[RMDB]
RNA sequence: GGGAACGACUCGAGUAGAGUCGAAAAUCUAUGGUCUUCGGACCAUAGAAAAUAAGAAACGGAAGCAUGAGAACCGAGACAAACAUGCAAACGCGAAAGCGAAAACAAUCCAGUUCGCUGGAUUGAAGCUAUUAAUCAAGUUCGCUUGAUUAAUAGCAAAAGAAACAACAACAACAAC
Reactivity to 2A3 in 0.01 (KOAc 150mM, MgCl2 10mM, bicine 150mM(pH8.5), 24C), signal-to-noise 4, nucleotides 027 to 126: u000c000u000a000u010g020g000u000c010u020u030c210g100g000a000c000c000a000u000a000g000a000a010a000a010u100a010a030g070a020a100a000c010g000g010a050a050g000c000a010u010g010a030g050a110a020c010c020g010a030g050a100c110a030a010a000c000a000u010g000c000a050a070a030c040g010c010g030a090a020a010g000c000g030a040a020a010a040c010a000a020u000c000c000a000g020u040u050c150g080c080u010g000g010a030u000u000g010a030a000
Reactivity to DMS in 0.01 (KOAc 150mM, MgCl2 10mM, bicine 150mM(pH8.5), 24C), signal-to-noise 4, nucleotides 027 to 126: u000c000u000a000u000g010g010u010c000u000u010c210g020g010a020c000c000a000u000a000g000a010a020a090a110u000a110a080g010a120a120a130c010g000g010a190a110g010c000a000u000g000a200g010a060a050c020c010g000a190g010a170c180a020a030a090c020a010u000g020c010a150a090a140c020g010c000g000a060a070a140g020c000g010a060a050a070a170c030a000a000u000c020c000a010g000u000u010c210g030c000u000g000g000a010u000u000g000a070a110